[RMDB]
RNA sequence: GGGAACGACUCGAGUAGAGUCGAAAAAGCACUGGUACGAUACGUAGUACCAGUGCAGUCGUUGGGAUGGAACGCAAUUAAAUACAUGUGUGACGUGUAUUUGCGAACGACGUAAUUAUUUUUCAAAAUCACGCUAUCGUGUUCGCACGAUAGCGAAGAAUUAUGGUCACUUCGGUGACCAUAAUUCAAAAGAAACAACAACAACAAC
Reactivity to 2A3 in 0.01 (KOAc 150mM, MgCl2 10mM, bicine 150mM(pH8.5), 24C), signal-to-noise 4, nucleotides 027 to 156: a000g000c020a000c000u010g000g000u000a010c020g020a100u060a210c090g080u180a020g010u000a020c000c000a000g000u000g000c010a000g010u000c000g020u040u060g100g070g030a110u080g070g130a060a030c010g010c030a020a030u140u190a130a040a020u050a000c010a030u040g080u050g170u200g300a130c070g000u000g000u010a020u020u060u050g020c010g010a030a000c010g020a000c030g050u010a080a030u100u170a120u080u080u020u040u110c070a010a050a040a130u170c070a020c070g000c000u000a000u000c000g000u000g020u040u060c140g040c030a000c000g000a000u010a000g010c000g000a000a000
Reactivity to DMS in 0.01 (KOAc 150mM, MgCl2 10mM, bicine 150mM(pH8.5), 24C), signal-to-noise 1, nucleotides 027 to 156: a120g000c010a000c000u000g000g070u000a000c000g000a200u010a110c120g030u010a140g040u000a000c010c030a010g010u010g020c010a010g070u000c000g040u020u000g030g020g000a140u000g010g020a040a300c020g020c030a110a150u000u010a070a030a070u000a000c000a020u000g020u020g000u020g030a160c050g050u010g000u000a020u000u000u000g050c070g000a050a170c040g010a230c040g000u000a060a120u020u030a150u010u010u000u000u010c080a040a040a070a190u000c120a220c030g020c010u000a000u000c000g060u010g020u000u010c270g030c000a030c020g000a010u020a000g000c020g030a000a030

Chemical mapping of a 207-nucleotide RNA with 2A3 and DMS. For DMS the reverse transcriptase was MarathonRT. The reactions ran in a buffer of 150 mM KOAc, 10 mM MgCl2 and 150 mM bicine (pH 8.5), at 24 C. Values cover nucleotides 27 to 156.